[RMDB]
Annotation
Structure probing data (2A3 and DMS) for a 177-nucleotide construct. For DMS the reverse transcriptase was MarathonRT.

RNA sequence: GGGAACGACUCGAGUAGAGUCGAAAACCUUUUAAAUCAUGUGUAGGAACGAGCUAUGAUGCAAGCAAUGUUUUUCUUUAGUGCUGGAGCAGUUUUUGGUUAUUGCUAUCGUCAUUACGAUGCUAAAUUUCUACGUCUCAUUCGUGAGACGUAGAAAAAAAGAAACAACAACAACAAC
Reactivity to 2A3 in 0.01 (KOAc 150mM, MgCl2 10mM, bicine 150mM(pH8.5), 24C), signal-to-noise 3, nucleotides 027 to 126: c010c000u020u070u050u120a110a130a030u140c030a040u080g070u010g020u120a020g090g010a060a040c050g010a050g070c030u060a030u190g020a010u030g070c050a070a030g000c010a070a100u050g050u000u060u000u000u020c010u020u110u060a080g020u010g090c020u030g000g060a050g030c020a030g000u040u010u020u100u060g080g000u040u070a080u060u070g000c000u050a030u130c000g000u010c010a030u060u100a020c070g030a030u030g000c000u060a010a080a160
Reactivity to DMS in 0.01 (KOAc 150mM, MgCl2 10mM, bicine 150mM(pH8.5), 24C), signal-to-noise 4, nucleotides 027 to 126: c010c000u000u060u050u020a040a100a090u030c140a060u020g010u000g010u000a040g010g000a050a050c060g000a060g020c040u000a040u010g000a030u020g010c090a070a070g000c080a040a040u010g000u010u010u010u000u020c020u000u000u010a050g010u000g000c020u000g000g000a120g010c070a060g000u000u000u000u010u000g000g020u020u010a050u000u010g000c010u010a040u010c020g010u010c130a050u000u020a070c080g030a080u020g010c060u000a050a050a140